[RMDB]
Annotation
This 177-nucleotide RNA was probed chemically with DMS and 2A3. In probing experiments dimethyl sulfate is read out at A N1 and C N3, which are open when not base-paired. The data come from the RNA Mapping Database (RMDB), library OK2TST. The DMS profile rests on 9,768 reads. DMS adducts were read by reverse transcription with MarathonRT. Conditions: 150 mM KOAc, 10 mM MgCl2 and 150 mM bicine (pH 8.5), 24 C. For 2A3, 7,215 sequencing reads were counted.
RNA sequence: GGGAACGACUCGAGUAGAGUCGAAAAGCGCCGCGCUGCCGCCAGCGCGCGAGCUGCGUGACGACGCGCGUGAGCGCCCGCCGGUUCGCGCCGUAGAACGCGUUGCGCGUCUGGCUCGCCUGCGUCAUCCACCCAUAAAUUUCGAUUUAUGGGUGGAAAAAGAAACAACAACAACAAC
Reactivity to DMS in 0.01 (KOAc 150mM, MgCl2 10mM, bicine 150mM(pH8.5), 24C), signal-to-noise 5, nucleotides 027 to 126: g020c090g010c030c070g000c080g030c040u010g030c080c140g010c030c020a050g010c030g000c020g000c010g010a020g020c040u010g030c020g010u000g000a170c210g010a020c030g010c120g000c040g010u000g000a080g010c020g030c050c060c050g000c070c020g010g010u000u000c030g000c040g000c000c020g010u000a050g000a250a040c020g010c010g020u000u000g000c010g010c010g010u010c030u000g000g010c010u000c060g010c040c070u010g000c020g010u010c090a180
Reactivity to 2A3 in 0.01 (KOAc 150mM, MgCl2 10mM, bicine 150mM(pH8.5), 24C), signal-to-noise 3, nucleotides 027 to 126: g010c030g020c020c000g030c040g020c040u080g050c070c020g010c020c020a020g000c000g000c020g000c000g020a030g060c160u210g000c020g010u010g030a070c060g000a020c010g110c010g000c000g020u020g020a030g010c030g080c050c040c020g070c030c040g040g020u030u020c010g000c000g010c020c000g000u020a030g010a100a010c010g000c020g030u030u050g000c000g000c000g010u030c020u000g000g000c000u000c030g000c020c020u040g010c000g040u020c020a060